[RMDB]
Structure probing data (DMS and 2A3) for a 207-nucleotide construct. Conditions: 150 mM KOAc, 10 mM MgCl2 and 150 mM bicine (pH 8.5), 24 C.
RNA sequence: GGGAACGACUCGAGUAGAGUCGAAAAAUGUAUAGUUCUGGUGCGUGUAUCAAACCAAGCGGAAUUCAUAGCCUGUCAAGCAUUUCUGUGUGCUGCUAUGACAGCAGAGUGGAAUGGUUGCAACAGAGACCGUGUGGCCCAGAAAGCCUAAAAUAUACAUACCAUUUAUGUUCGCAUAAAUGGUAUGAAAAGAAACAACAACAACAAC
Reactivity to DMS in 0.01 (KOAc 150mM, MgCl2 10mM, bicine 150mM(pH8.5), 24C), signal-to-noise 4, nucleotides 027 to 156: a100u010g010u010a130u000a060g030u000u000c060u010g020g000u010g020c050g030u020g020u000a170u030c070a070a110a160c030c040a050a140g010c050g000g000a100a170u000u000c060a070u000a090g010c040c030u000g020u000c020a060a040g010c000a040u000u000u000c060u010g010u010g010u010g030c030u010g030c020u000a120u000g000a070c050a030g000c010a060g000a160g030u010g000g010a070a090u000g030g000u000u010g010c030a080a050c030a070g010a170g000a100c020c030g020u000g020u000g010g000c000c000c020a170g000a070a120a090g010c020c020u000a050a020a060a100u010a100u000a120
Reactivity to 2A3 in 0.01 (KOAc 150mM, MgCl2 10mM, bicine 150mM(pH8.5), 24C), signal-to-noise 6, nucleotides 027 to 156: a000u110g040u050a170u050a120g080u040u020c010u030g070g000u140g040c060g030u120g050u080a120u260c120a120a070a080c030c020a050a010g030c010g010g030a050a070u130u070c040a060u150a080g060c010c000u010g050u070c000a010a000g040c000a020u010u070u030c040u040g140u050g050u050g090c010u000g000c020u140a090u300g070a190c010a010g000c010a000g020a020g120u070g000g020a020a020u010g110g100u020u010g000c020a040a010c000a020g040a010g010a040c010c000g010u040g010u030g040g010c010c010c010a010g040a030a040a010g010c010c010u080a070a090a040a040u180a030u010a050